[RMDB]
RNA sequence: GGGAACGACUCGAGUAGAGUCGAAAAAUGCCGCAUUCAGGGACGGUAACUCUAGUGGGCCACUGUCUAUCUAGCGUUGACAUCUACAUACUAUAUAGUAAUACCAAUACUCAAGACUACGAAACGGAUAUAUGGCCGGUUUCGACCGGCCAUAUAUAAAAGAAACAACAACAACAAC
Reactivity to DMS in 0.01 (KOAc 150mM, MgCl2 10mM, bicine 150mM(pH8.5), 24C), signal-to-noise 1, nucleotides 027 to 126: a070u000g000c010c010g000c040a070u010u010c180a050g010g000g000a080c060g000g060u000a090a070c040u000c020u020a020g030u040g000g060g000c000c130a190c160u000g000u000c030u000a200u000c050u000a000g060c070g000u000u000g000a070c040a040u020c150u000a070c100a050u010a130c090u000a030u000a040u070a040g000u000a130a060u010a170c080c180a060a030u020a070c090u020c100a020a020g000a160c020u000a010c070g000a020a150a060c070g000g000
Reactivity to 2A3 in 0.01 (KOAc 150mM, MgCl2 10mM, bicine 150mM(pH8.5), 24C), signal-to-noise 1, nucleotides 027 to 126: a000u090g010c000c000g000c030a070u060u130c100a060g000g000g080a030c010g000g000u000a030a000c060u020c020u060a130g000u050g000g000g000c000c000a170c100u020g010u000c000u020a030u020c000u000a010g000c000g060u000u020g030a020c010a050u080c040u040a030c000a180u140a060c040u030a080u030a000u140a300g000u000a000a060u020a130c000c010a000a010u000a080c000u100c030a000a000g080a090c000u060a090c130g060a050a040a000c060g040g060
Source information:
Source: RMDB library OK1LIB, as collected in RNAgym. Structure probing data (DMS and 2A3) for a 177-nucleotide construct. Reactivities are given for positions 27 through 126. The RNA was probed in 150 mM KOAc, 10 mM MgCl2 and 150 mM bicine (pH 8.5) at 24 C.